[RMDB]
RNA sequence: GGGAACGACUCGAGUAGAGUCGAAAAAAUAUGAUCACCCCUUGAUGGAGAGCAUUCUCAAAGAAACCUAUGGGAUUAUGGUUUAUCAAGAGCAAGUUAUGCAAAUUGCCGGCUCUUUAGCAAGCUAACUACUAGACUGGUUCGCCAGUCUAGUAGUAAAAGAAACAACAACAACAAC
Reactivity to DMS in 0.01 (KOAc 150mM, MgCl2 10mM, bicine 150mM(pH8.5), 24C), signal-to-noise 3, nucleotides 027 to 126: a100a090u000a040u010g000a160u000c120a140c030c000c020c030u000u010g020a030u000g000g000a040g010a030g020c040a080u020u000c040u000c040a050a120a110g000a030a040a090c070c040u000a130u010g010g000g010a120u000u010a050u010g020g010u000u000u000a070u010c130a040a110g010a140g030c110a070a050g000u010u010a070u000g020c080a040a080a080u010u000g030c050c210g000g010c030u000c020u000u000u000a060g000c040a010a040g020c140u020a130
Reactivity to 2A3 in 0.01 (KOAc 150mM, MgCl2 10mM, bicine 150mM(pH8.5), 24C), signal-to-noise 2, nucleotides 027 to 126: a000a010u260a060u150g060a080u100c020a080c010c010c010c000u010u000g010a050u040g040g000a020g000a010g020c000a090u140u030c060u000c020a070a080a030g060a060a090a020c020c040u030a100u160g170g100g030a020u120u080a040u150g010g020u030u070u020a060u050c050a050a000g030a040g040c020a100a020g010u150u140a020u160g030c020a010a100a270u050u040g020c030c020g110g000c030u020c000u010u020u000a020g020c000a020a000g050c000u050a010
Chemical mapping of a 177-nucleotide RNA with DMS and 2A3. Source: RMDB library OK2TST, as collected in RNAgym. For DMS the reverse transcriptase was MarathonRT. The reactions ran in a buffer of 150 mM KOAc, 10 mM MgCl2 and 150 mM bicine (pH 8.5), at 24 C. Reactivities are rounded to 0.1 and cut off at 0 and 3.